[RMDB]
Chemical mapping of a 207-nucleotide RNA with DMS and 2A3. For DMS, 1,734 sequencing reads were counted. Conditions: 150 mM KOAc, 10 mM MgCl2 and 150 mM bicine (pH 8.5), 24 C.
RNA sequence: GGGAACGACUCGAGUAGAGUCGAAAAUCUAUGAUCUUAUGUGUCCAGCGCACCGAAUGGGGGAAAAGACUUGGAGUUUUAUAACAUGGGAAAUUGGGUACCAGAAUCUUAAGGGAAGAGACCAAGGAGUUUUCUAGCAAAGUCCUGUAUGUGCCUGAUUCUAUCGCCUAUUCGUAGGCGAUAGAAUAAAAGAAACAACAACAACAAC
Reactivity to DMS in 0.01 (KOAc 150mM, MgCl2 10mM, bicine 150mM(pH8.5), 24C), signal-to-noise 1, nucleotides 027 to 156: u000c050u000a090u030g000a170u020c000u000u000a060u000g030u000g020u000c010c030a130g020c130g030c030a130c050c030g050a100a060u000g000g010g040g020g000a060a070a070a130g010a050c000u000u020g030g030a120g020u010u020u000u010a070u000a080a120c070a100u020g000g000g000a050a080a170u000u000g010g020g090u000a120c010c020a090g010a130a120u000c080u000u010a110a100g030g000g020a090a080g000a090g010a070c060c050a050a070g010g000a080g020u000u000u010u010c050u020a060g020c020a090a050a130g000u000c030c020u000g030u000a100u000g050u000g020c030c000u000g020
Reactivity to 2A3 in 0.01 (KOAc 150mM, MgCl2 10mM, bicine 150mM(pH8.5), 24C), signal-to-noise 2, nucleotides 027 to 156: u050c030u080a160u110g040a040u050c080u090u190a170u270g080u010g030u020c010c010a080g010c070g000c030a030c020c030g130a250a130u130g000g000g020g000g030a030a030a000a050g040a010c010u050u040g060g050a030g020u090u070u030u150a130u110a050a060c040a060u080g040g000g070a050a030a000u120u090g010g020g000u000a120c010c000a020g030a050a050u060c020u170u100a100a050g040g000g010a020a020g030a010g000a030c040c000a020a060g010g030a080g020u050u060u050u040c060u100a060g040c020a080a040a000g000u070c020c030u050g030u040a100u080g020u060g030c000c030u030g020